[RMDB]
RNA sequence: GGGAACGACUCGAGUAGAGUCGAAAAGCAGCGCCGUGAUGACCUUGUGGAACGACGCCGGCGAGAGGGCCGCGAGCUCCGCCGUCCACCAGUCGGGCGGCGACCUCGUCGGGAACAGCACCUCGUUUCCACAUUCCCAGUUCGCUGGGAAUGUGGAAAAAGAAACAACAACAACAAC
Reactivity to 2A3 in 0.01 (KOAc 150mM, MgCl2 10mM, bicine 150mM(pH8.5), 24C), signal-to-noise 1, nucleotides 027 to 126: g070c030a000g000c000g030c010c000g080u040g000a210u080g050a130c050c140u130u060g060u110g040g050a000a000c050g070a010c040g050c010c010g030g010c000g000a020g030a020g000g080g030c010c010g130c050g060a070g010c020u100c120c000g000c000c020g000u050c000c000a120c010c030a100g130u220c120g000g000g000c000g000g000c050g000a000c020c000u000c000g090u030c000g010g000g010a060a000c020a040g000c000a040c000c010u000c000g020u000u000